[RMDB]
RNA sequence: GGGAACGACUCGAGUAGAGUCGAAAAGAAACGACGUAACGCCUCUGAACGUCGCAGGAAGAAAUAUAGGAAACCUGAGGAAACAGGAACACGCAACGUAUGCCAUAAAAGAACUAGAGGCGAGAAAGAUUACCCUAGUCUUCGGACUAGGGUAAUCAAAAGAAACAACAACAACAAC
Reactivity to 2A3 in 0.01 (KOAc 150mM, MgCl2 10mM, bicine 150mM(pH8.5), 24C), signal-to-noise 3, nucleotides 027 to 126: g150a040a100a000c010g030a000c000g000u000a170a030c030g030c010c020u000c010u030g070a090a040c010g000u010c000g000c060a010g010g090a040a060g060a070a130a000u300a020u160a080g130g000a070a050a050c010c000u020g000a030g080g110a140a080a000c040a010g000g010a050a010c070a010c070g080c020a110a000c100g140u100a010u080g020c000c000a040u080a050a110a000a020g110a030a010c030u060a060g000a000g000g030c040g000a050g020a000a090a000
Reactivity to DMS in 0.01 (KOAc 150mM, MgCl2 10mM, bicine 150mM(pH8.5), 24C), signal-to-noise 3, nucleotides 027 to 126: g010a060a170a160c000g000a010c030g030u010a120a150c040g020c000c000u000c000u020g010a080a040c010g010u000c000g000c110a050g000g030a120a050g010a130a060a060u050a090u020a060g010g000a050a130a070c010c000u000g000a170g050g010a120a140a180c030a000g030g000a140a160c130a040c080g000c080a050a030c080g000u020a040u010g000c020c060a190u010a030a020a080a090g000a040a070c080u020a020g020a000g000g010c000g010a130g000a080a110a090
The record gives the reactivity of an RNA of 177 nucleotides to 2A3 and DMS. Values are in units of 0.01, from 0 to 300, in steps of 10. The DMS profile rests on 3,503 reads. For 2A3, 2,383 sequencing reads were counted. The reactions ran in a buffer of 150 mM KOAc, 10 mM MgCl2 and 150 mM bicine (pH 8.5), at 24 C. For 2A3 the reverse transcriptase was SuperScript II with manganese. Values cover nucleotides 27 to 126.